Overview: Chemical mapping of a 177-nucleotide RNA with DMS and 2A3. Source: RMDB library M2PK50, as collected in RNAgym. High 2A3 reactivity points to a flexible backbone, as in loops and unpaired stretches.
RNA sequence: GGGAACGACUCGAGUAGAGUCGAAAAUUCAAGCGAUUCGUCGCUUGAACCUGAGGAGACUCAAGCAAAAUUGUUCCGUUUUGCUUUUGCUUUCCUCUUUUAAGUAGUAGUGCUUCGGCACUACUAAGAGAUUAACGUUGUUCGCAACGUUAAUCUCAAAAGAAACAACAACAACAAC
Reactivity to DMS in 0.01 (KOAc 150mM, MgCl2 10mM, bicine 150mM(pH8.5), 24C), signal-to-noise 2, nucleotides 027 to 126: u000u000c000a010a000g010c000g010a020u000u010c220g030u010c000g020c000u000u000g010a000a030c030c020u010g010a010g010g000a030g000a020c010u000c050a000a000g010c010a010a010a000a010u000u010g010u000u000c050c030g000u000u010u000u000g010c000u010u000u000u000g010c200u010u000u000c000c010u000c000u000u000u010u010a090a130g010u010a010g010u010a010g020u000g010c010u000u010c240g020g010c010a010c010u010a000c000u000a020a060
Reactivity to 2A3 in 0.01 (KOAc 150mM, MgCl2 10mM, bicine 150mM(pH8.5), 24C), signal-to-noise 3, nucleotides 027 to 126: u030u000c000a000a000g000c000g020a010u030u100c200g060u000c000g140c000u020u000g000a010a000c010c020u000g000a010g010g010a010g010a020c010u010c020a000a000g010c000a020a010a040a040u130u260g040u170u050c050c050g000u000u000u000u020g000c000u010u010u000u000g040c040u030u010u010c020c000u000c030u070u060u020u040a070a000g010u010a000g000u000a000g000u000g000c010u020u070c200g090g000c000a000c000u000a000c000u000a010a010

The 2A3 profile rests on 5,159 reads.